The record gives the reactivity of an RNA of 177 nucleotides to DMS and 2A3. The DMS profile rests on 6,723 reads. Reactivities are given for positions 27 through 126. The reactions ran in a buffer of 150 mM KOAc, 10 mM MgCl2 and 150 mM bicine (pH 8.5), at 24 C.
RNA sequence: GGGAACGACUCGAGUAGAGUCGAAAAGGCUGCCGCUUCUCCCGCGUCCGCCAUUUUGUUGCUGUGGCUAUUGGGAACAAGCUGGGCAAAAGCACCCCGGAGGCGCGACGCUCCUUCGAGUUCGGUGCUUCCUGUAGCUAUUCGUAGCUACAGGAAGAAAAGAAACAACAACAACAAC
Reactivity to DMS in 0.01 (KOAc 150mM, MgCl2 10mM, bicine 150mM(pH8.5), 24C), signal-to-noise 4, nucleotides 027 to 126: g010g010c050u000g010c040c030g000c020u010u000c090u000c010c000c030g020c190g010u000c080c170g000c020c040a110u010u010u010u010g010u010u010g010c050u000g020u010g010g000c020u000a120u020u010g010g000g000a060a110c170a030a040g020c020u010g000g020g000c070a040a050a080a070g000c020a030c020c000c020c000g010g000a020g000g010c100g000c030g020a140c170g000c050u000c010c010u000u000c010g010a090g010u000u010c130g000g010u000g020
Reactivity to 2A3 in 0.01 (KOAc 150mM, MgCl2 10mM, bicine 150mM(pH8.5), 24C), signal-to-noise 1, nucleotides 027 to 126: g100g000c050u060g050c070c030g000c030u020u000c010u000c000c000c000g030c020g020u010c050c070g000c000c000a040u090u110u110u220g280u190u150g000c110u070g080u090g100g020c010u040a140u080u300g030g000g010a000a000c010a100a000g030c000u130g030g020g070c060a050a050a000a110g060c010a030c010c010c010c000g000g000a000g000g050c010g020c050g020a100c060g000c010u000c010c000u020u010c000g060a050g080u090u230c030g030g030u020g010